Chemical mapping of a 177-nucleotide RNA with DMS and 2A3. Values cover nucleotides 27 to 126. The reactions ran in a buffer of 150 mM KOAc, 10 mM MgCl2 and 150 mM bicine (pH 8.5), at 24 C. The data come from the RNA Mapping Database (RMDB), library OK1LIB. For DMS, 7,061 sequencing reads were counted.
RNA sequence: GGGAACGACUCGAGUAGAGUCGAAAAUCUAUCACGACAAAAAAAUUCGCGUGUUGCCAAAUUAUGCUCAUUUUGUCGCAUAAUGAAAAACGAAAAACAAACAAACAAAUCUGUGAAAUCCGUUACAUAUACUCAUUUACUUCGGUAAAUGAGUAUAAAAAGAAACAACAACAACAAC
Reactivity to DMS in 0.01 (KOAc 150mM, MgCl2 10mM, bicine 150mM(pH8.5), 24C), signal-to-noise 4, nucleotides 027 to 126: u040c040u000a070u010c080a090c020g000a060c090a010a000a060a150a100a100a110u020u010c130g020c140g000u000g020u000u000g000c070c090a050a070a030u010u010a010u010g000c010u020c060a150u030u010u030u030g010u050c200g010c050a000u000a020a020u010g010a040a040a060a070a060c080g000a010a070a030a070a050c120a060a040a040c160a040a060a070c140a040a080a080u010c080u010g000u010g010a050a110a070u010c100c020g000u010u010a040c100a120
Reactivity to 2A3 in 0.01 (KOAc 150mM, MgCl2 10mM, bicine 150mM(pH8.5), 24C), signal-to-noise 7, nucleotides 027 to 126: u040c020u050a090u120c010a020c060g140a080c180a030a110a010a010a030a050a130u110u100c070g020c010g020u040g030u020u060g050c020c010a030a210a000u030u030a020u010g010c010u020c150a190u120u130u120u280g120u100c040g000c020a000u040a040a010u050g080a020a040a040a030a050c080g070a120a070a030a050a000c060a020a100a000c030a040a110a010c030a040a170a060u090c130u100g050u030g070a040a070a040u050c050c020g020u040u030a010c020a030